This 207-nucleotide RNA was probed chemically with DMS and 2A3.
[RMDB]
RNA sequence: GGGAACGACUCGAGUAGAGUCGAAAAUGCCGAACCUAAGGCUGAAUGCGAAAUUAUCAGCUUCGCUGAUCUCGAAGAUCUAAGAGUAGCUGCUUAAUUAGCAAAGUUGUUACCUAAAUACGGGUGACCCGGUGUUCGCGAGCUCCACCAGAGGUUUAUUGAAAUAAUUGUUCGCAAUUAUUUCAAUAAAAGAAACAACAACAACAAC
Reactivity to DMS in 0.01 (KOAc 150mM, MgCl2 10mM, bicine 150mM(pH8.5), 24C), signal-to-noise 1, nucleotides 027 to 156: u010g020c060c000g010a040a050c040c050u030a120a170g030g030c010u030g000a100a120u000g020c040g010a200a120a070u010u000a020u000c010a010g000c030u000u000c010g020c040u000g020a010u000c020u010c190g000a160a210g000a050u000c010u010a200a050g000a040g030u000a010g010c020u000g030c130u000u010a050a040u000u000a300g000c010a050a070a120g000u010u010g040u000u010a030c010c000u020a060a070a180u010a120c110g000g010g010u010g010a030c020c030c010g020g010u000g030u000u000c010g010c030g020a090g000c030u000c020c010a050c020c010a180g000a030g030g000u010u010u000
Reactivity to 2A3 in 0.01 (KOAc 150mM, MgCl2 10mM, bicine 150mM(pH8.5), 24C), signal-to-noise 2, nucleotides 027 to 156: u100g000c000c000g040a050a050c020c050u110a080a040g040g020c020u040g090a130a060u080g000c010g020a010a030a050u010u020a010u010c000a000g000c000u050u030c020g000c090u060g020a020u030c020u080c120g180a200a090g000a040u010c020u130a100a040g050a030g060u020a000g010c010u010g000c010u010u020a020a020u010u040a020g000c000a050a110a040g030u050u070g000u030u030a030c000c010u110a110a150a100u190a120c090g000g000g000u020g010a030c020c030c020g000g050u060g060u050u050c070g010c040g070a020g040c020u020c020c010a030c010c010a050g050a080g130g000u000u050u000
The RNA was probed in 150 mM KOAc, 10 mM MgCl2 and 150 mM bicine (pH 8.5) at 24 C. The data come from the RNA Mapping Database (RMDB), library ARCHII. The 2A3 profile rests on 1,196 reads.